An RNA of 207 nucleotides, treated with 2A3 and read out base by base. Source: RMDB library OK3TST, as collected in RNAgym. The RNA was probed in 150 mM KOAc, 10 mM MgCl2 and 150 mM bicine (pH 8.5) at 24 C. Reactivities are given for positions 27 through 156. For 2A3, 445 sequencing reads were counted.
[RMDB]
RNA sequence: GGGAACGACUCGAGUAGAGUCGAAAAACAAGGUGGUGCAGCAUUUGAUAUAAAGGCUUGGUAUCAGGUGAACCGUCCUGCUUUGGAGAUUUGUGUACCAUUCUUUCUAUAGAUUGUAAUUUAUCUUCUUAGGACUUAUUUUUGCGAUCUUAUUUCACCACGGCGUAUAUUUCGAUAUACGCCGUGGAAAAGAAACAACAACAACAAC
Reactivity to 2A3 in 0.01 (KOAc 150mM, MgCl2 10mM, bicine 150mM(pH8.5), 24C), signal-to-noise 1, nucleotides 027 to 156: a000c020a020a050g090g000u040g000g020u060g050c000a000g010c040a080u060u050u050g050a020u130a000u020a150a220a040g090g000c000u040u050g000g000u010a060u110c060a040g040g040u020g070a020a010c020c000g030u050c020c000u050g020c050u070u090u060g020g000a040g000a020u000u000u000g080u000g000u010a020c000c030a020u050u050c000u020u160u010c120u130a070u040a090g020a050u000u050g010u050a020a040u040u040u030a030u010c000u070u030c000u070u170a070g140g030a020c010u130u080a210u070u170u060u030u030g040c010g060a000u120c010u020u040a120u080u230u160c080a040